The data come from the RNA Mapping Database (RMDB), library OK1LIB. Chemical mapping of a 177-nucleotide RNA with DMS and 2A3. DMS adducts were read by reverse transcription with MarathonRT. For 2A3, 4,865 sequencing reads were counted. High 2A3 reactivity points to a flexible backbone, as in loops and unpaired stretches.

[RMDB]
RNA sequence: GGGAACGACUCGAGUAGAGUCGAAAAUACUCUAGCGAGCCAAGAAAGGCCACGGUUCGCGCUGGGGUACGUUUUUACCCGUGGCUUUGCUACUCCAAGGACCGAAAGACUCAGAUUUGCAAAUUCAACUACUCCACUCAUUCGUGAGUGGAGUAGUAAAAGAAACAACAACAACAAC
Reactivity to DMS in 0.01 (KOAc 150mM, MgCl2 10mM, bicine 150mM(pH8.5), 24C), signal-to-noise 3, nucleotides 027 to 126: u050a020c020u000c010u000a030g000c070g000a160g000c120c070a100a140g010a050a060a020g000g000c010c020a060c000g000g000u020u020c060g000c010g000c000u010g000g000g000g030u010a020c150g020u010u000u000u000u010a100c180c000c000g000u040g000g010c000u020u000u000g010c010u000a090c050u020c000c040a140a070g000g000a060c040c020g000a050a080a130g000a080c040u010c060a030g000a030u010u020u010g000c040a080a040a130u060u020c090a110
Reactivity to 2A3 in 0.01 (KOAc 150mM, MgCl2 10mM, bicine 150mM(pH8.5), 24C), signal-to-noise 5, nucleotides 027 to 126: u070a000c010u000c000u000a000g050c000g040a020g050c040c080a090a040g130a080a120a010g090g000c010c000a000c010g020g000u120u140c090g000c010g010c060u020g000g000g010g020u020a070c050g030u020u020u010u190u160a070c030c010c020g010u010g000g000c000u020u030u070g010c010u020a030c010u000c010c020a060a060g050g020a060c020c030g050a090a050a000g070a040c020u020c100a050g030a210u030u060u090g040c040a040a040a100u080u070c000a030